[RMDB]
RNA sequence: GGGAACGACUCGAGUAGAGUCGAAAAAGUGAGGCGGCGAUCUCAUCGCGGUCCGCUGGCGACAGGUACUUCUGGUAGAGAAAUCGCUUCUCCAGCUCGAAGAUCUGGUGGUUGGUGAAGGCGGUGCCAUCCCGGUCAGUUUCGACUGACCGGGAUGAAAAGAAACAACAACAACAAC
Reactivity to DMS in 0.01 (KOAc 150mM, MgCl2 10mM, bicine 150mM(pH8.5), 24C), signal-to-noise 3, nucleotides 027 to 126: a090g010u000g000a100g020g000c000g000g030c030g010a050u000c090u000c120a080u010c020g000c040g020g010u000c010c010g000c000u000g000g000c050g010a080c060a060g000g020u000a070c050u020u000c030u000g010g000u010a090g010a090g010a040a040a040u010c050g000c110u000u010c010u020c020c040a040g010c010u000c130g020a120a110g000a060u050c070u000g000g030u020g000g000u010u010g000g000u010g000a090a050g020g030c040g000g000u000g010c140
Reactivity to 2A3 in 0.01 (KOAc 150mM, MgCl2 10mM, bicine 150mM(pH8.5), 24C), signal-to-noise 3, nucleotides 027 to 126: a000g160u130g020a080g010g050c080g030g020c030g040a050u000c050u080c180a100u050c050g010c070g040g000u010c020c000g000c000u010g040g010c010g000a020c030a040g050g020u050a190c000u040u050c000u050g110g000u110a060g010a010g060a080a150a030u170c060g030c110u000u000c000u000c000c000a020g020c010u030c030g130a130a060g020a190u080c020u110g060g030u030g040g000u080u000g000g000u030g020a010a010g070g000c000g010g050u010g000c010